Chemical mapping of a 207-nucleotide RNA with 2A3 and DMS. Conditions: 150 mM KOAc, 10 mM MgCl2 and 150 mM bicine (pH 8.5), 24 C. In probing experiments dimethyl sulfate is read out at A N1 and C N3, which are open when not base-paired. The DMS profile rests on 2,519 reads. For DMS the reverse transcriptase was MarathonRT. For 2A3 the reverse transcriptase was SuperScript II with manganese.
RNA sequence: GGGAACGACUCGAGUAGAGUCGAAAAAGUUCGCGCUUCCGUGAAACGCGAAAAUCGGACGGUGGCUGCAAGUCGCAUCGCAAAACCGCGGCAAGUGGAGUUAGCUAGAGGAGGCUGGGUUUUGGCUAGAACACACGGUACUUCGGUACCGUGUGAACUAGCCUGUCAUCUUCGGAUGACAGGCUAGAAAAGAAACAACAACAACAAC
Reactivity to 2A3 in 0.01 (KOAc 150mM, MgCl2 10mM, bicine 150mM(pH8.5), 24C), signal-to-noise 2, nucleotides 027 to 156: a000g090u030u020c000g010c000g010c040u120u080c040c060g120u090g070a080a040a010c020g000c020g030a050a010a000a070u130c030g030g000a020c020g010g050u040g050g000c010u040g000c060a060a000g020u010c020g000c030a050u070c030g010c090a030a060a030a050c040c060g010c010g060g000c090a110a040g030u050g060g030a070g050u060u080a020g000c050u040a020g000a030g090g020a020g030g030c040u020g000g040g000u040u030u050u060g010g000c010u000a020g060a140a010c000a010c000a000c020g000g000u020a010c000u040u070c170g050g000u000a000c020c000g000u000g000u000g000a000a000
Reactivity to DMS in 0.01 (KOAc 150mM, MgCl2 10mM, bicine 150mM(pH8.5), 24C), signal-to-noise 1, nucleotides 027 to 156: a140g030u000u000c030g000c010g060c000u000u000c020c200g000u000g020a040a040a040c010g050c010g040a030a030a070a130u000c080g030g000a080c070g030g010u020g000g030c010u010g000c050a040a160g000u000c050g010c030a120u020c060g030c030a060a100a070a090c040c080g000c020g100g000c090a050a090g060u000g010g000a100g000u000u010a060g020c020u000a100g000a110g010g020a130g040g010c040u000g000g000g020u000u000u000u010g010g030c050u010a060g010a120a170c020a030c000a030c000g010g000u000a010c000u000u000c250g000g030u010a030c010c000g020u010g020u000g000a020a160